[RMDB]
RNA sequence: GGGAACGACUCGAGUAGAGUCGAAAAGGUCGCAUCUUCGGAUGCGACCAAAGAACCUCAAAGUGACGCAAACUUCCGCGUCAGUAGGAGGAAACGAGGUAAAAAGUGCACCCUUCGGGGUGCACAACUAGUUUUAGUGGUUCGCCACUAAAACUAGAAAAGAAACAACAACAACAAC
Reactivity to 2A3 in 0.01 (KOAc 150mM, MgCl2 10mM, bicine 150mM(pH8.5), 24C), signal-to-noise 2, nucleotides 027 to 126: g010g010u010c000g000c000a000u010c010u060u060c170g080g000a010u000g000c000g020a010c000c000a010a000a000g000a020a020c000c000u000c000a140a100a040g150u020g010a010c000g000c030a040a180a280c120u270u090c120c130g000c000g010u000c000a000g000u000a000g030g050a010g020g030a050a030a060c090g020a070g060g020u140a050a150a030a020a040g020u000g010c000a010c000c010c000u030u060c170g020g010g000g000u020g000c000a000c000a010a000
Reactivity to DMS in 0.01 (KOAc 150mM, MgCl2 10mM, bicine 150mM(pH8.5), 24C), signal-to-noise 2, nucleotides 027 to 126: g020g010u000c000g030c000a000u000c000u000u030c230g040g000a030u000g010c010g000a000c000c010a000a040a070g000a110a090c010c000u000c000a050a120a150g020u000g000a010c000g030c010a070a150a130c160u010u010c170c130g000c000g010u000c010a050g000u000a080g020g030a050g000g000a080a080a130c140g000a070g000g000u000a060a080a030a150a060g010u000g010c010a020c000c000c000u000u000c130g020g000g000g020u000g000c000a000c000a000a020